[RMDB]
The data come from the RNA Mapping Database (RMDB), library OK2TRN.
Structure probing data (2A3 and DMS) for a 177-nucleotide construct.
For DMS the reverse transcriptase was MarathonRT.
The DMS profile rests on 54,033 reads.
The RNA was probed in 150 mM KOAc, 10 mM MgCl2 and 150 mM bicine (pH 8.5) at 24 C.
RNA sequence: GGGAACGACUCGAGUAGAGUCGAAAACAUGUUCUAAGAGUGCACGUUUGACACGUAUACCUGUUCAAACCAUUGUUAAUGGUUCAACUAAGGUUGUGUAUGUAACGGCAAAUGGUGGUCGUAGAGCGAAUUCAUCUACUUUCGAGUAGAUGAAUUCAAAAGAAACAACAACAACAAC
Reactivity to 2A3 in 0.01 (KOAc 150mM, MgCl2 10mM, bicine 150mM(pH8.5), 24C), signal-to-noise 9, nucleotides 027 to 126: c030a060u170g030u020u040c020u050a060a030g050a050g100u070g020c030a030c280g010u010u020u030g060a050c040a010c080g040u060a030u090a130c010c010u030g030u030u080c060a060a030a030c010c010a020u030u090g300u280u300a080a020u010g020g000u010u030c020a020a020c030u140a090a040g030g010u060u070g040u050g020u020a050u170g130u030a030a020c020g010g000c020a020a030a050u110g040g010u040g030g050u030c030g040u040a020g010a010g050c050
Reactivity to DMS in 0.01 (KOAc 150mM, MgCl2 10mM, bicine 150mM(pH8.5), 24C), signal-to-noise 9, nucleotides 027 to 126: c080a100u010g010u000u000c020u000a060a080g010a100g010u000g010c010a060c010g010u000u000u000g010a030c020a030c010g020u010a080u000a030c000c010u000g010u000u000c240a070a030a010c000c000a010u000u010g010u010u010a040a020u000g000g000u000u000c300a020a030c050u010a080a030g010g010u000u000g010u000g010u000a030u010g000u000a020a030c040g010g000c020a030a060a080u000g010g020u000g010g010u000c020g010u000a020g000a040g010c090